RNA sequence: GGGAACGACUCGAGUAGAGUCGAAAAGGUUCCGUCUUCGGACGGAACCAAACAUAGUAUACCCUGUUGCAUGUAUACUUUGAUAUACCGUAAUGCAACGGAAAAUGCCUAGUUUCGACUAGGCAAACCAUUAAGCCUGUUUCGACAGGCUUAAUGGAAAAGAAACAACAACAACAAC
Reactivity to DMS in 0.01 (KOAc 150mM, MgCl2 10mM, bicine 150mM(pH8.5), 24C), signal-to-noise 3, nucleotides 027 to 126: g020g000u000u000c000c000g000u000c000u000u010c220g030g010a030c010g010g020a010a000c000c000a020a040a050c040a030u000a040g010u000a030u000a010c020c090c130u000g010u000u000g000c000a030u020g010u000a010u000a000c010u000u010u010g000a130u000a080u010a130c020c120g000u000a090a040u000g000c000a000a010c000g000g000a060a070a100a090u000g030c000c010u000a000g020u000u000u010c170g010a030c000u000a000g000g000c000a000a000a070
Reactivity to 2A3 in 0.01 (KOAc 150mM, MgCl2 10mM, bicine 150mM(pH8.5), 24C), signal-to-noise 2, nucleotides 027 to 126: g000g010u000u000c000c000g000u010c000u030u050c200g090g000a000c000g040g010a000a000c000c010a000a010a000c000a010u080a010g070u060a020u020a030c010c030c130u100g020u020u000g020c020a030u020g010u020a010u000a020c000u090u030u130g130a100u070a020u030a190c010c040g030u040a030a050u040g020c010a000a000c000g060g010a130a150a020a060u070g010c000c000u000a010g010u010u040u080c200g050a020c010u000a000g010g000c000a000a000a000